Notes: The record gives the reactivity of an RNA of 207 nucleotides to 2A3. It was measured as part of the RMDB library OK3TST. 2A3 adducts were read by reverse transcription with SuperScript II with manganese.
RNA sequence: GGGAACGACUCGAGUAGAGUCGAAAAACAAGAUUUUAAUCAUCAAACACUACUAAGAAAUGACACUAAAUUUAAUUCAAGUCUAUGCCUAGAGAAAUACUGAUGUUCAUGAAUCAGGAAAGACGGCAGGAGUGUGCUGCAUAGCUGUAGCUCUCCAUCCUAUAGGACGAUUCGUCGUCCUAUAGGAAAAAGAAACAACAACAACAAC
Reactivity to 2A3 in 0.01 (KOAc 150mM, MgCl2 10mM, bicine 150mM(pH8.5), 24C), signal-to-noise 3, nucleotides 027 to 156: a010c020a030a020g020a030u020u110u130u120a180a080u100c050a010u040c050a070a120a060c070a020c080u130a030c040u160a130a010g030a050a170a090u140g020a000c030a010c060u090a090a080a200u110u100u110a070a090u140u170c070a050a040g020u010c010u050a070u070g010c010c000u080a080g010a010g020a110a070a020u130a070c030u020g010a010u030g040u110u050c080a080u140g120a080a040u010c000a000g020g020a010a050a000g060a000c110g040g000c020a030g020g020a020g010u130g060u090g060c040u010g000c010a020u090a100g050c100u080g030u030a000g000c000u010c000u000c000c000a010